[RMDB]
RNA sequence: GGGAACGACUCGAGUAGAGUCGAAAAGUCUGUGCGUUUCCAUUUGAGUAUCCUGAAAACGGGCUUUUCAGCAUGGAACGUACAUAUUAAAUAUUAGGAGUGCAUAGUGGCCCGUAUAGCAGGCAUUGAGGCGAGGAUUGUUUCGACAAUCCUCGAAUACGAGUAUGAUCUUCGGAUCAUACUCGUAAAAAGAAACAACAACAACAAC
Reactivity to DMS in 0.01 (KOAc 150mM, MgCl2 10mM, bicine 150mM(pH8.5), 24C), signal-to-noise 2, nucleotides 027 to 156: g030u010c030u000g040u000g000c030g010u000u000u000c000c010a140u040u000u040g040a190g020u000a080u000c060c010u010g000a080a040a080a180c050g020g010g040c050u000u000u000u010c020a120g020c070a040u000g000g030a000a000c030g020u000a030c020a010u000a100u020u000a070a050a190u000a060u000u000a100g000g000a300g010u000g010c010a090u000a170g010u000g000g030c000c020c020g000u000a060u000a140g030c110a040g000g000c070a120u000u000g020a130g020g000c040g000a030g000g000a010u000u000g020u020u010u000c300g020a150c000a000a020u000c000c000u000c040g000a060a050
Reactivity to 2A3 in 0.01 (KOAc 150mM, MgCl2 10mM, bicine 150mM(pH8.5), 24C), signal-to-noise 2, nucleotides 027 to 156: g060u030c040u010g000u010g000c010g000u000u010u100c030c030a080u080u040u000g070a060g040u070a100u180c010c000u050g070a020a060a070a100c060g000g030g000c020u090u100u020u150c060a050g040c030a010u020g010g020a000a000c020g000u010a000c010a010u000a000u020u100a010a020a050u200a080u010u180a020g080g000a070g040u030g000c070a070u050a120g100u050g040g000c000c000c010g010u010a010u060a100g060c060a040g070g000c050a020u050u130g040a060g070g050c000g000a000g000g000a000u000u000g000u000u130u020c100g010a000c010a010a010u000c000c000u000c000g000a000a000

This 207-nucleotide RNA was probed chemically with DMS and 2A3.
For DMS, 2,730 sequencing reads were counted.
The RNA was probed in 150 mM KOAc, 10 mM MgCl2 and 150 mM bicine (pH 8.5) at 24 C.
Source: RMDB library M2RFPK, as collected in RNAgym.